The data come from the RNA Mapping Database (RMDB), library M2RFPK. Structure probing data (2A3) for a 207-nucleotide construct. The 2A3 profile rests on 409 reads. Reactivities are given for positions 27 through 156. 2A3 adducts were read by reverse transcription with SuperScript II with manganese. The reactions ran in a buffer of 150 mM KOAc, 10 mM MgCl2 and 150 mM bicine (pH 8.5), at 24 C.
RNA sequence: GGGAACGACUCGAGUAGAGUCGAAAAACACCAAAACUGAAAACGGAAGGCAAUCCUUCCACGACGAUACCUACUUUCCUUUGAUCGUCGUUACUACUGGCAUAGCCACAAAGGAGAACAAACAUGAGCGCGGACACUGACUUCGGUCAGUGUCCAAGGUUUCACACACGUUCGCGUGUGUGAAACCAAAAGAAACAACAACAACAAC
Reactivity to 2A3 in 0.01 (KOAc 150mM, MgCl2 10mM, bicine 150mM(pH8.5), 24C), signal-to-noise 1, nucleotides 027 to 156: a000c090a080c000c000a090a000a080a040c200u240g140a280a000a020a000c010g010g000a000a000g010g010c140a040a060u300c000c020u000u030c000c000a000c000g030a000c010g000a000u180a190c000c000u060a110c110u150u020u110c020c020u030u010u070g040a000u010c000g000u000c000g000u050u000a040c030u030a040c000u010g060g010c040a260u140a000g020c000c000a020c000a010a090a070g060g030a010g000a080a080c070a060a060a020c050a130u160g000a010g100c200g000c090g150g000a000c000a000c030u000g040a000c000u130u160c230g040g000u000c000a000g000u030g020u000c000c000a000a000